[RMDB]
RNA sequence: GGGAACGACUCGAGUAGAGUCGAAAACCUGGGCCGCAGCUGUUCUCACGGCAGCAGCUGUGGCAUUCCUCUGUGGGAGAGAAACUGUUACACGAUUGAAACCGCUUUCUUAGCAAAACAGAAAGCGACUCAAGGGAUUCUUCGGAAUCCCUUGAGUAAAAGAAACAACAACAACAAC
Reactivity to DMS in 0.01 (KOAc 150mM, MgCl2 10mM, bicine 150mM(pH8.5), 24C), signal-to-noise 1, nucleotides 027 to 126: c030c030u000g020g060g040c020c000g000c030a000g020c040u010g000u010u010c010u010c070a150c150g050g030c100a050g030c000a000g010c000u000g000u000g000g000c000a080u060u010c020c000u000c060u150g000u020g020g030g000a010g000a090g000a050a010a160c140u050g000u000u030a100c120a080c250g000a210u000u000g050a030a130a110c190c060g000c000u000u020u000c000u000u000a220g030c270a010a010a150a070c170a030g000a000a000a010g040c000g000
Reactivity to 2A3 in 0.01 (KOAc 150mM, MgCl2 10mM, bicine 150mM(pH8.5), 24C), signal-to-noise 2, nucleotides 027 to 126: c000c000u010g010g120g000c010c000g000c000a000g000c030u000g000u010u050c190u030c080a130c130g140g000c090a000g000c000a000g000c000u000g000u000g010g000c010a000u000u000c000c030u080c010u060g140u240g040g120g000a070g030a010g000a050a130a020c100u160g030u190u140a020c040a040c130g090a280u140u190g020a050a070a020c050c010g000c000u010u000u020c000u030u000a110g070c280a110a070a050a050c060a000g000a000a000a000g000c000g000
Chemical mapping of a 177-nucleotide RNA with DMS and 2A3. For DMS the reverse transcriptase was MarathonRT. The 2A3 profile rests on 649 reads. The data come from the RNA Mapping Database (RMDB), library RFM100. Reactivities are rounded to 0.1 and cut off at 0 and 3. In probing experiments dimethyl sulfate is read out at A N1 and C N3, which are open when not base-paired.